The record gives the reactivity of an RNA of 177 nucleotides to DMS and 2A3. DMS adducts were read by reverse transcription with MarathonRT. In probing experiments dimethyl sulfate is read out at A N1 and C N3, which are open when not base-paired. The RNA was probed in 150 mM KOAc, 10 mM MgCl2 and 150 mM bicine (pH 8.5) at 24 C.
RNA sequence: GGGAACGACUCGAGUAGAGUCGAAAAUCAUUAACUUGGUCAUGCCGCCGCCGAUGUUGAGCGGAGGCCACAGGUCGGCCGGAAGUGAGGAGCCACGAUGACGACGGCCGUGACCGGUGAACACCACCAUCCACCACCGAUUCGUCGGUGGUGGAUGAAAAGAAACAACAACAACAAC
Reactivity to DMS in 0.01 (KOAc 150mM, MgCl2 10mM, bicine 150mM(pH8.5), 24C), signal-to-noise 1, nucleotides 027 to 126: u010c110a030u000u000a080a060c100u010u000g030g000u030c050a060u000g060c020c030g020c020c000g010c010c010g030a100u010g000u010u000g010a130g010c030g020g020a010g000g010c000c120a020c050a080g000g010u000c020g020g000c000c010g030g020a170a130g030u000g000a090g000g000a200g000c010c020a030c060g010a120u010g030a060c060g010a170c030g000g000c010c030g010u000g010a010c040c020g000g030u000g000a150a050c140a140c060c020a150c190
Reactivity to 2A3 in 0.01 (KOAc 150mM, MgCl2 10mM, bicine 150mM(pH8.5), 24C), signal-to-noise 2, nucleotides 027 to 126: u040c020a070u150u240a150a060c100u170u300g030g020u070c020a060u070g010c010c000g010c000c000g000c030c000g170a140u170g080u300u110g080a040g070c010g000g000a000g000g000c000c000a000c000a010g020g040u040c000g000g000c080c000g080g020a110a020g020u020g080a130g050g070a040g070c020c020a080c010g080a140u180g050a010c030g030a000c000g010g020c010c030g020u030g060a030c000c030g000g000u020g020a040a020c030a000c050c030a000c010